Chemical mapping of a 207-nucleotide RNA with 2A3. The RNA was probed in 150 mM KOAc, 10 mM MgCl2 and 150 mM bicine (pH 8.5) at 24 C. For 2A3 the reverse transcriptase was SuperScript II with manganese. The 2A3 profile rests on 540 reads.
RNA sequence: GGGAACGACUCGAGUAGAGUCGAAAACAUAGAGGGGGAGCAUUUACAAAUGCCUAUAACAGCAGUAUAUGCCACACUUAGCUCAAUGCGAAUGUUCUGUACACUGUAUAGAAAUGGUGUUGCUAUGGGUCACAUUAAUGUAAGCAACUCCAAAAGAAGACAUUCCAGGAUUCGUCCUGGAAUGUCUAAAAGAAACAACAACAACAAC
Reactivity to 2A3 in 0.01 (KOAc 150mM, MgCl2 10mM, bicine 150mM(pH8.5), 24C), signal-to-noise 1, nucleotides 027 to 156: c040a070u300a100g170a120g000g010g000g030g000a040g020c000a040u050u050u080a070c030a070a170a070u090g010c010c000u050a010u050a210a010c010a000g060c000a000g030u010a070u000a040u190g040c020c010a000c010a000c040u070u150a030g040c020u030c060a080a140u150g000c030g100a060a030u160g000u050u000c000u010g010u010a000c230a010c090u160g010u010a000u000a010g040a010a050a110u040g000g040u030g000u000u010g000c000u000a060u200g000g060g140u040c010a000c000a130u070u300a120a050u120g020u050a030a020g020c010a000a000c000u000c000c070a070a090a000a070g030a020